[RMDB]
RNA sequence: GGGAACGACUCGAGUAGAGUCGAAAAGUCUCUGAGUCAGACUGUCUGACACUGAGAGACACAGACAGUCUCUCACAGACUCAGUCUCUGUGAGAGAGUGACACACUCAGACUGACACUCACAGUCAGCAUACCAGCACAUUCGUGUGCUGGUAUGCAAAAGAAACAACAACAACAAC
Reactivity to DMS in 0.01 (KOAc 150mM, MgCl2 10mM, bicine 150mM(pH8.5), 24C), signal-to-noise 2, nucleotides 027 to 126: g010u000c030u000c010u000g010a080g030u000c080a080g040a300c060u000g000u000c000u020g010a090c100a110c130u020g000a070g010a080g000a060c130a120c040a070g010a040c070a050g000u000c000u010c000u000c000a030c030a000g010a000c050u030c250a180g010u020c170u000c020u000g000u000g000a030g000a020g020a040g010u010g010a060c050a060c200a080c040u000c080a050g000a090c090u000g000a110c080a060c090u000c070a090c060a050g020u010c050a070
Reactivity to 2A3 in 0.01 (KOAc 150mM, MgCl2 10mM, bicine 150mM(pH8.5), 24C), signal-to-noise 2, nucleotides 027 to 126: g020u010c000u000c000u030g030a010g040u070c040a000g010a100c030u060g050u010c000u000g020a030c030a030c160u070g080a030g030a000g020a240c020a010c010a100g040a010c020a030g060u000c000u000c000u000c030a020c000a010g000a000c020u000c200a050g160u040c010u040c000u070g020u000g000a010g040a010g010a010g020u000g040a050c020a000c000a010c110u000c000a010g020a110c030u030g010a030c030a030c070u100c000a070c020a040g080u060c030a020
Structure probing data (DMS and 2A3) for a 177-nucleotide construct. Reactivities are given for positions 27 through 126. For 2A3, 2,223 sequencing reads were counted. 2A3 adducts were read by reverse transcription with SuperScript II with manganese. It was measured as part of the RMDB library OK2TRN.